[RMDB]
RNA sequence: GGGAACGACUCGAGUAGAGUCGAAAAGAUAUGGACGGUCACCCACAAGCUUGGAUUUAUGUGGCUAAGUGGUCGGAAACGACCACGAUGCCACAUUGUCAGCUUGUGACAAGUCCGUCCUAAGUCAGCGUUCAAUAUCGUUCGCGAUAUUGAACGCAAAAGAAACAACAACAACAAC
Reactivity to 2A3 in 0.01 (KOAc 150mM, MgCl2 10mM, bicine 150mM(pH8.5), 24C), signal-to-noise 1, nucleotides 027 to 126: g000a030u140a060u140g020g010a010c000g020g000u020c020a070c030c040c000a000c000a000a000g000c030u210u300g110g000a030u230u300u110a010u050g000u000g000g000c000u050a220a020g000u000g000g000u020c000g030g000a090a070a000c020g020a020c000c000a000c000g000a000u020g000c000c010a000c000a000u000u000g000u020c000a000g020c010u000u000g000u030g000a000c010a070a270g020u050c000c000g000u040c000c000u040a150a020g130u010c060a050
Reactivity to DMS in 0.01 (KOAc 150mM, MgCl2 10mM, bicine 150mM(pH8.5), 24C), signal-to-noise 1, nucleotides 027 to 126: g040a080u010a300u010g000g020a010c000g020g010u010c030a240c300c230c000a030c020a020a000g020c010u000u000g020g000a000u010u000u000a000u000g060u000g000g000c000u010a220a300g000u010g000g010u000c000g000g000a080a080a210c000g000a010c000c000a010c000g000a180u010g010c000c010a000c010a000u000u000g010u000c000a000g000c010u000u000g030u000g000a030c140a110a150g000u000c000c000g000u000c000c010u000a020a140g000u000c060a150
This 177-nucleotide RNA was probed chemically with 2A3 and DMS.
Values cover nucleotides 27 to 126.
2A3 adducts were read by reverse transcription with SuperScript II with manganese.
DMS adducts were read by reverse transcription with MarathonRT.
For DMS, 948 sequencing reads were counted.